[RMDB]
Structure probing data (DMS and 2A3) for a 177-nucleotide construct. The 2A3 profile rests on 5,926 reads.
RNA sequence: GGGAACGACUCGAGUAGAGUCGAAAACGGUGCGCAGAUGGGCGAGGUGUCCGGUCCCAUGAGUCAAAAGCCGGUAAGAACCUCUGGCCCGAGGUCGCUCGUCAGGACUGGACCACUGGACGCAGCACUGUUCCUAGUCAUUCGUGACUAGGAACAGAAAAGAAACAACAACAACAAC
Reactivity to DMS in 0.01 (KOAc 150mM, MgCl2 10mM, bicine 150mM(pH8.5), 24C), signal-to-noise 4, nucleotides 027 to 126: c080g000g030u000g000c030g020c060a060g000a260u030g000g010g040c040g010a190g000g000u010g000u000c010c000g000g000u000c000c010c270a130u020g000a020g020u020c040a040a050a070a110g020c180c120g010g000u020a060a020g030a180a020c020c000u000c000u010g020g000c100c130c060g000a020g030g000u000c000g000c020u000c000g010u000c230a180g010g010a020c010u010g000g000a020c040c060a060c000u000g030g000a190c060g000c020a060g020c050a170
Reactivity to 2A3 in 0.01 (KOAc 150mM, MgCl2 10mM, bicine 150mM(pH8.5), 24C), signal-to-noise 5, nucleotides 027 to 126: c020g040g000u060g010c030g010c060a060g070a260u110g040g020g030c040g020a040g010g030u070g010u020c010c000g000g010u000c020c000c010a030u070g000a010g030u030c070a040a050a080a070g120c140c050g000g010u030a020a000g030a070a010c010c010u010c030u080g160g030c030c020c030g000a000g000g020u010c010g000c000u000c010g060u050c070a030g000g010a010c000u010g000g010a010c000c010a020c020u020g010g030a030c020g000c040a030g030c010a010
High DMS reactivity at an A or C suggests that its Watson-Crick edge is free.